[RMDB]
An RNA of 177 nucleotides, treated with DMS and 2A3 and read out base by base.
It was measured as part of the RMDB library M2PK50.
DMS adducts were read by reverse transcription with MarathonRT.
For 2A3, 2,176 sequencing reads were counted.
RNA sequence: GGGAACGACUCGAGUAGAGUCGAAAACGGUCGAAAUUCGUUUCGACCGAAUAUGCUAGCUGUGCACAGCUGCAAUGCUAAGCUGAAAGCCAGCUGCAAGCGCGAGUUCGGCGUUCGCGCCGAACAAUUGUGCUAUAGAGUUCGCUCUAUAGCACAAAAAAGAAACAACAACAACAAC
Reactivity to DMS in 0.01 (KOAc 150mM, MgCl2 10mM, bicine 150mM(pH8.5), 24C), signal-to-noise 4, nucleotides 027 to 126: c010g000g010u010c000g000a010a000a010u000u010c180g010u000u000u000c010g020a010c000c000g000a040a020u000a100u000g020c000u000a020g020c000u000g020u000g000c010a190c010a010g000c000u000g010c090a120a100u020g010c120u000a090a050g020c010u010g000a120a120a090g000c010c010a010g010c000u010g010c040a070a080g010c180g000c100g020a160g010u000u000c000g000g000c000g020u000u000c230g020c040g010c010c000g010a000a000c010a040a070
Reactivity to 2A3 in 0.01 (KOAc 150mM, MgCl2 10mM, bicine 150mM(pH8.5), 24C), signal-to-noise 2, nucleotides 027 to 126: c010g000g000u000c000g000a010a010a020u130u060c160g070u050u020u000c000g000a010c000c000g000a010a020u110a020u040g020c080u080a000g000c000u040g100u180g040c020a010c000a260g000c020u030g000c070a080a110u180g010c020u100a120a000g000c000u040g020a170a020a010g000c010c000a020g020c000u010g030c020a040a010g050c060g040c040g090a130g050u000u000c000g030g000c000g060u040u040c190g000c010g000c050c000g000a010a000c000a010a020
About this RNA: Values cover nucleotides 27 to 126.